[RMDB]
Record summary
Conditions: 150 mM KOAc, 10 mM MgCl2 and 150 mM bicine (pH 8.5), 24 C. An RNA of 177 nucleotides, treated with 2A3 and DMS and read out base by base.
RNA sequence: GGGAACGACUCGAGUAGAGUCGAAAACACGGUGCGAAGAGUCUAUUGAGCUAGUUGGUAGUCCUCCGGCCCCUGAAUGCGGCCAAUCCUAACUGCGGAGCACAUACUCCCAAUCCAGGGAGCAGUGCUCCUACGAACUAUUCGUAGUUCGUAGGAGAAAAGAAACAACAACAACAAC
Reactivity to 2A3 in 0.01 (KOAc 150mM, MgCl2 10mM, bicine 150mM(pH8.5), 24C), signal-to-noise 9, nucleotides 027 to 126: c060a010c010g040g020u070g020c030g040a070a030g020a060g060u020c030u070a130u050u160g040a040g030c050u060a040g090u040u060g040g030u030a040g040u040c010c020u020c020c030g020g000c030c000c000c000u050g090a110a030u110g030c020g010g000c010c010a010a080u040c000c010u040a060a080c040u100g050c060g040g020a020g010c010a010c000a020u160a040c010u020c020c000c000a020a070u100c060c030a040g000g000g010a000g000c010a010g010u020g000
Reactivity to DMS in 0.01 (KOAc 150mM, MgCl2 10mM, bicine 150mM(pH8.5), 24C), signal-to-noise 9, nucleotides 027 to 126: c080a100c090g010g010u010g010c040g010a090a080g010a080g010u010c030u010a100u010u000g010a120g010c080u010a070g010u010u000g000g000u000a060g010u010c030c030u010c050c070g010g010c040c010c030c040u000g000a080a060u020g020c160g000g000c030c050a060a070u010c020c010u000a050a110c110u020g010c100g000g000a030g010c000a010c010a040u010a300c000u000c000c000c000a100a110u050c150c180a120g000g000g000a010g020c160a020g010u010g000